RNA sequence: GGGAACGACUCGAGUAGAGUCGAAAAACACUGUACGCAGUGAGAUCUUAAGUGCAUUUGACGACCCGUCUAGUGUGGUGAACUCUUGAGUUGAUAGUGUUGAACUCUGAGCUGGUGAUCUAAAGAAGAGCCAAAGAGGAUUCGUCCUCUUUGGCUCAAAAGAAACAACAACAACAAC
Reactivity to 2A3 in 0.01 (KOAc 150mM, MgCl2 10mM, bicine 150mM(pH8.5), 24C), signal-to-noise 3, nucleotides 027 to 126: a000c000a000c010u070g030u090a000c190g030c060a000g020u010g050a030g000a030u030c030u080u210a160a140g080u050g080c030a080u040u020u060g020a020c020g090a090c000c000c070g000u000c060u060a030g010u000g040u020g080g190u040g040a050a050c000u000c000u020u100g020a010g040u030u040g090a050u030a160g070u210g130u130u060g000a010a010c000u000c030u070g030a030g020c010u030g030g020u070g010a070u060c010u000a010a090a050g100a060a030
Reactivity to DMS in 0.01 (KOAc 150mM, MgCl2 10mM, bicine 150mM(pH8.5), 24C), signal-to-noise 3, nucleotides 027 to 126: a070c030a060c010u000g020u010a050c150g020c070a040g000u010g000a130g010a040u000c080u020u020a050a140g010u010g000c070a060u020u020u000g030a060c040g010a100c160c060c080g020u000c010u010a050g000u000g010u000g000g000u000g020a100a110c030u020c060u010u000g000a100g000u000u010g000a050u000a070g060u010g030u010u010g010a070a050c020u010c040u000g000a050g010c100u010g000g000u000g020a060u000c040u020a070a070a120g040a160a200
Chemical mapping of a 177-nucleotide RNA with 2A3 and DMS.
Reactivities are given for positions 27 through 126.